[RMDB]
The record gives the reactivity of an RNA of 207 nucleotides to 2A3 and DMS. For DMS the reverse transcriptase was MarathonRT. 2A3 adducts were read by reverse transcription with SuperScript II with manganese.
RNA sequence: GGGAACGACUCGAGUAGAGUCGAAAAUUGUGAUGUAACAGAGAGCGCGUUCCUGCAAGCAGCCUUGAGGCUGGGAGGGGUCCACCUAAGCCUUAUGCUCCUUUCCCCUGAGGUUCUACAGAUUGAACAGCUGUGUUCCUACCCAAUCACAAUGGGAUAAAUAGUCGACGUUCGCGUCGACUAUUUAAAAAGAAACAACAACAACAAC
Reactivity to 2A3 in 0.01 (KOAc 150mM, MgCl2 10mM, bicine 150mM(pH8.5), 24C), signal-to-noise 1, nucleotides 027 to 156: u070u060g030u050g040a040u060g040u080a130a060c080a060g080a000g000a020g060c080g000c040g070u030u000c010c000u000g000c020a040a020g000c040a000g000c020c000u100u110g070a050g120g020c060u070g020g010g000a040g000g010g000g000u000c050c040a020c000c040u060a050a080g000c010c030u070u050a070u140g010c000u070c000c030u060u070u040c010c000c000c000u050g040a020g010g000u010u000c020u040a030c000a040g020a060u150u160g040a140a010c030a020g000c000u030g000u000g000u070u000c010c010u020a060c010c000c000a000a030u080c020a020c010a170a060u010g000g000g000a000
Reactivity to DMS in 0.01 (KOAc 150mM, MgCl2 10mM, bicine 150mM(pH8.5), 24C), signal-to-noise 1, nucleotides 027 to 156: u030u030g000u010g010a110u000g000u000a130a160c030a110g000a300g040a080g020c030g040c040g030u000u000c010c020u000g020c080a050a160g080c070a040g020c010c010u010u000g020a050g020g060c030u000g020g020g030a060g030g010g030g000u000c070c040a090c030c020u000a090a170g000c050c000u000u000a070u010g020c000u030c010c010u010u010u010c030c020c000c010u000g010a090g050g040u000u000c000u000a300c050a080g000a120u000u000g020a030a050c100a100g020c030u010g090u000g020u010u000c000c010u000a240c000c000c020a080a100u020c190a040c090a060a170u010g000g000g010a280